[RMDB]
RNA sequence: GGGAACGACUCGAGUAGAGUCGAAAAUUUCGAGUAUCAACUUUAGCGAGUUACGUUUAACUACCUCACCUGAAUAGUUAAAAAGAGUCUUAACAGGUUAGCUGGUUCAUACUAGCCCUGUUAUAUGGCGUUUUGAACUAGUGAAGUUUAAGUAAUAUCACCCAUUCUAGUUCGCUAGAAUGGGUGAAAAAGAAACAACAACAACAAC
Reactivity to 2A3 in 0.01 (KOAc 150mM, MgCl2 10mM, bicine 150mM(pH8.5), 24C), signal-to-noise 1, nucleotides 027 to 156: u210u130u090c100g000a040g050u070a070u160c060a000a160c040u070u090u040a080g060c000g000a010g050u000u080a020c030g000u000u000u100a040a050c040u010a040c010c000u080c050a030c000c010u000g040a120a070u040a110g040u000u040a010a010a010a010a010g090a010g000u020c000u000u000a000a000c000a000g000g000u020u150a000g020c010u000g000g010u120u200c050a020u180a110c020u020a000g020c000c000c000u000g000u000u010a070u000a000u020g020g000c030g000u000u070u000u050g030a010a000c020u000a060g050u050g070a100a000g020u010u090u300a130a100g060u110a100a060u130a050
Reactivity to DMS in 0.01 (KOAc 150mM, MgCl2 10mM, bicine 150mM(pH8.5), 24C), signal-to-noise 1, nucleotides 027 to 156: u000u010u000c070g010a210g010u010a110u000c050a050a030c020u000u000u000a050g040c070g000a090g020u000u000a070c040g000u010u010u000a040a070c030u000a050c050c020u000c020a060c060c120u000g020a130a110u000a020g010u010u030a000a030a050a060a040g020a110g040u000c030u000u000a030a030c000a030g000g020u000u000a130g000c000u000g020g000u000u000c100a130u010a060c050u000a040g020c020c000c040u000g020u000u000a010u000a030u000g040g020c010g020u000u000u000u030g000a030a030c020u000a030g020u000g010a070a060g000u020u000u010a050a090g010u000a070a070u000a190